[RMDB]
RNA sequence: GGGAACGACUCGAGUAGAGUCGAAAACCCGCAUUUUGACAAGGUGCGGGAUACGGUUCUGGGGCGCUGCUCCAUGUGCCAUGCGACGGAGCCGGGCUGGGAAGGCAUCAUCGCGCCGCCGAAAGGAACGGCGUCAUAUGUUCGCAUAUGACGCCGUAAAAGAAACAACAACAACAAC
Reactivity to 2A3 in 0.01 (KOAc 150mM, MgCl2 10mM, bicine 150mM(pH8.5), 24C), signal-to-noise 2, nucleotides 027 to 126: c020c010c010g020c010a070u150u240u060u230g090a080c080a110a060g040g020u030g000c010g000g020g020a030u110a060c150g000g080u090u000c020u100g070g030g030g000c200g030c160u140g030c040u010c020c000a040u110g020u000g040c020c020a030u130g040c020g020a040c020g050g000a030g000c000c020g020g000g060c000u040g030g090g020a050a070g030g010c000a000u080c000a050u110c040g020c010g000c010c030g020c010c000g080a070a050a000g070g020a050
Reactivity to DMS in 0.01 (KOAc 150mM, MgCl2 10mM, bicine 150mM(pH8.5), 24C), signal-to-noise 2, nucleotides 027 to 126: c000c000c000g030c070a040u010u000u010u000g010a130c190a160a220g010g010u000g000c000g000g000g030a060u000a040c170g010g010u000u000c050u000g010g010g010g010c030g020c120u000g010c030u000c010c060a030u000g000u010g020c020c060a140u010g030c040g020a070c080g000g000a090g030c010c090g000g000g040c020u000g000g010g010a090a140g000g010c040a050u000c030a110u000c040g020c030g050c040c020g000c050c000g000a010a050a130g000g000a120
Record summary
Structure probing data (2A3 and DMS) for a 177-nucleotide construct. It was measured as part of the RMDB library OK2TST. DMS adducts were read by reverse transcription with MarathonRT. The DMS profile rests on 1,402 reads.